[RMDB]
RNA sequence: GGGAACGACUCGAGUAGAGUCGAAAAGACCUUAGGGGAAGGGAGACAUGGAAGAACAUGUCAUGUGAAUCCUAAGGAAGGUUGGGCGCCUUGUUUAUGGACAUCUAUAGAUUCACAUUCCAACCUAGAUAGUAUUGAAUUUCGAUUCAGUGCUAUCAAAAGAAACAACAACAACAAC
Reactivity to 2A3 in 0.01 (KOAc 150mM, MgCl2 10mM, bicine 150mM(pH8.5), 24C), signal-to-noise 9, nucleotides 027 to 126: g070a040c000c000u000u010a010g010g010g010g060a060a070g120g050g060a110g010a010c000a000u010g030g090a230a160g050a290a060c000a010u000g000u000c010a010u160g030u010g050a040a020u020c000c000u010a010a000g020g000a010a010g020g010u040u030g030g020g020c060g050c020c010u050u070g090u060u080u030a060u070g040g010a030c030a090u080c070u080a070u030a110g030a050u060u060c050a020c010a110u090u000c000c000a010a010c020c000u000a030
Reactivity to DMS in 0.01 (KOAc 150mM, MgCl2 10mM, bicine 150mM(pH8.5), 24C), signal-to-noise 9, nucleotides 027 to 126: g020a140c000c000u000u000a010g010g000g000g010a200a140g010g010g010a130g000a010c010a000u000g000g020a160a150g010a150a180c010a000u000g000u000c000a060u020g000u050g000a120a170u040c000c020u010a020a060g000g000a060a020g000g010u000u000g010g000g040c190g000c050c050u010u010g010u010u010u000a030u010g000g000a140c300a110u030c040u010a070u020a070g000a060u000u010c080a060c070a130u010u010c010c000a030a050c020c010u000a090